[RMDB]
Structure probing data (2A3) for a 207-nucleotide construct.
Values cover nucleotides 27 to 156.
RNA sequence: GGGAACGACUCGAGUAGAGUCGAAAAAGCCACCGCUACGGCGGUAGCAAGUAGAAAAGUUGGUGCUUAGACCACGCCCUCUACCGUAAUAAUAGAUAAAUAGGCGAGUAUCAGUACGCUGAUACAAAAAACACUCACACGUUCGCGUGUGAGUGAAGCACACUAUGAUCUUCGGAUCAUAGUGUGCAAAAGAAACAACAACAACAAC
Reactivity to 2A3 in 0.01 (KOAc 150mM, MgCl2 10mM, bicine 150mM(pH8.5), 24C), signal-to-noise 2, nucleotides 027 to 156: a000g020c000c000a010c000c000g000c000u020a010c140g110g000c000g000g000u010a000g010c030a100a010g020u010a000g010a070a010a000a000g040u100u030g010g000u070g090c210u300u190a090g040a090c000c000a000c000g000c000c010c000u000c000u010a030c020c020g050u020a030a030u070a200a010u070a120g090a080u090a160a140a070u190a050g030g010c020g000a030g010u010a000u000c000a000g000u060a060c240g020c070u000g020a000u000a010c000a000a050a110a000a000a000c000a000c000u010c000a000c000a000c000g010u050u050c140g000c000g160u000g000u000g010a000g000u000g000a010a000